[RMDB]
RNA sequence: GGGAACGACUCGAGUAGAGUCGAAAAAAAAUCUAGUGCAAAUAUUGUCUUAAUUACUUAGGCUAAAAGAAAUCAGUAUUAAAGCGGGACAAGGCAUCGACAUUUGAUACAAAUAUUGAUCAAUGGAACAAGAAACACUACUUCGGUAGUGUUUCAAUCCCUAUUACUAGUUCGCUAGUAAUAGGGAAAAAGAAACAACAACAACAAC
Reactivity to 2A3 in 0.01 (KOAc 150mM, MgCl2 10mM, bicine 150mM(pH8.5), 24C), signal-to-noise 1, nucleotides 027 to 156: a000a000a000a000u010c010u040a020g000u010g020c060a080a170a110u070a150u140u090g010u000c000u050u200a190a130u170u080a140c040u030u080a060g090g000c030u140a000a190a000a000g100a020a100a000u100c030a030g090u060a030u120u020a100a170a000g080c030g010g020g000a010c030a020a040g090g000c000a000u100c050g040a010c020a120u120u120u040g000a000u110a060c030a010a200a000u250a120u060u220g000a050u020c020a010a030u020g020g000a110a050c120a250a000g010a000a000a020c000a000c020u010a000c000u010u010c030g070g000u000a000g010u000g000u000u000u010c000a000a000
Reactivity to DMS in 0.01 (KOAc 150mM, MgCl2 10mM, bicine 150mM(pH8.5), 24C), signal-to-noise 2, nucleotides 027 to 156: a040a030a100a060u010c010u000a020g000u000g000c040a180a050a090u020a050u010u000g010u010c020u010u000a100a090u000u000a080c030u010u010a110g060g000c030u010a040a050a100a160g010a080a110a090u000c020a080g020u020a050u010u010a020a050a050g010c020g020g000g000a100c000a050a090g020g000c050a060u000c050g030a050c010a030u010u000u000g010a140u000a090c070a020a030a120u000a050u010u020g010a050u000c050a050a020u000g010g010a070a120c120a050a120g010a020a010a000c010a000c000u000a030c010u000u000c300g050g040u000a020g020u000g000u000u000u000c000a030a140